An RNA of 177 nucleotides, treated with DMS and 2A3 and read out base by base.
For 2A3 the reverse transcriptase was SuperScript II with manganese.
High 2A3 reactivity points to a flexible backbone, as in loops and unpaired stretches.
It was measured as part of the RMDB library OK1LIB.
The DMS profile rests on 40,032 reads.
RNA sequence: GGGAACGACUCGAGUAGAGUCGAAAAGCUCUGCGAGACAGAUCGAACAACAAAGAGAGAUCGAAAAUCUUAGAGGAGAGAACGAAUCUAUCGACUUCACUAGGACAUUGUCGAUCAGAGGUCCAAAGACCAAUGAUGGGUUCGCCUAUCGUUGGUCAAAAGAAACAACAACAACAAC
Reactivity to DMS in 0.01 (KOAc 150mM, MgCl2 10mM, bicine 150mM(pH8.5), 24C), signal-to-noise 9, nucleotides 027 to 126: g020c020u010c000u010g000c030g000a300g000a020c050a090g010a020u000c010g000a220a250c060a060a130c300a090a150a070g000a070g000a300g000a020u010c010g010a070a080a140a180u000c010u000u000a010g000a070g000g000a010g000a150g010a080a070c020g000a040a140u050c180u030a000u000c000g020a090c000u000u000c000a090c010u000a010g000g000a010c130a100u020u010g010u000c000g000a160u010c010a020g000a030g000g000u000c020c020a040a120a110
Reactivity to 2A3 in 0.01 (KOAc 150mM, MgCl2 10mM, bicine 150mM(pH8.5), 24C), signal-to-noise 9, nucleotides 027 to 126: g030c000u000c000u000g010c030g020a030g000a020c010a020g010a020u020c020g040a060a050c030a060a030c040a030a300a010g100a010g010a000g000a010u010c020g030a040a040a010a060u000c000u010u010a010g010a040g030g000a010g010a010g030a070a030c020g020a030a050u110c070u140a020u050c070g130a190c050u010u000c010a010c030u010a010g000g010a010c020a120u080u150g040u010c000g000a010u010c000a000g020a010g020g020u000c010c000a050a050a010